[RMDB]
RNA sequence: GGGAACGACUCGAGUAGAGUCGAAAAGAACAUCAACUAUUACGAGGAUCGCUCGGCUUGCCUCGGCGAAAUGACUCACGAAGGUUAUGAGCAUUCUUCGGCUCGCCAGGCUUGCGGCGGUCGCGGCGACCAAAUCAUCGUUCGCGAUGAUUUGGUCAAAAGAAACAACAACAACAAC
Reactivity to 2A3 in 0.01 (KOAc 150mM, MgCl2 10mM, bicine 150mM(pH8.5), 24C), signal-to-noise 3, nucleotides 027 to 126: g020a080a030c040a160u120c040a030a160c070u190a150u300u300a110c010g020a050g160g000a010u010c000g000c020u060c110g270g000c050u010u020g010c020c010u040c120g000g000c000g040a050a070a060u210g060a150c020u020c100a050c040g070a050a030g090g020u190u140a090u200g110a040g060c050a070u140u030c020u080u020c040g030g000c020u020c010g000c000c000a000g000g000c000u000u000g000c000g020g030c030g000g000u020c010g000c000g030g020c030
Reactivity to DMS in 0.01 (KOAc 150mM, MgCl2 10mM, bicine 150mM(pH8.5), 24C), signal-to-noise 2, nucleotides 027 to 126: g000a140a080c080a090u010c090a110a100c070u000a080u010u010a130c030g010a060g010g000a040u000c060g000c000u000c120g020g000c030u000u000g000c020c010u000c150g000g000c030g010a020a080a100u010g020a160c060u000c040a080c050g010a080a080g000g010u010u020a150u020g010a120g000c080a020u000u010c070u000u000c040g000g000c090u000c040g020c000c000a030g000g000c000u000u010g020c050g010g010c030g000g020u000c020g000c030g010g010c190